[RMDB]
RNA sequence: GGGAACGACUCGAGUAGAGUCGAAAAGGCUAGUUUCGACUAGCCACAUCACCUUUGUGAUCCCAACGUGAGACGCAUCGAUCGCUGUGUGCCCAUUGGGCACCAGCGGGAGCGUCUCUGGGAUCACUCUGGUUUCACGGGUGCAUUCGUGCACCAAUCCUUCCUCUUGGUUCGCCAAGAGGAAGGAAAAAGAAACAACAACAACAAC
Reactivity to 2A3 in 0.01 (KOAc 150mM, MgCl2 10mM, bicine 150mM(pH8.5), 24C), signal-to-noise 1, nucleotides 027 to 156: g010g000c010u010a000g010u010u120u110c280g000a050c000u030a020g000c080c000a000c000a010u020c000a020c010c000u000u050u050g000u000g000a010u000c090c020c000a030a030c140g160u160g090a000g000a040c040g050c060a240u090c100g080a060u120c010g000c050u100g130u040g000u070g290c030c090c210a300u210u300g000g000g020c000a000c000c000a000g030c040g020g020g000a000g000c000g000u000c010u000c000u000g000g000g000a000u020c000a000c000u000c000u010g050g190u040u090u170c180a130c090g140g010g000u010g000c030a060u010u070c200g210u110g000c000a000c030c000a000a000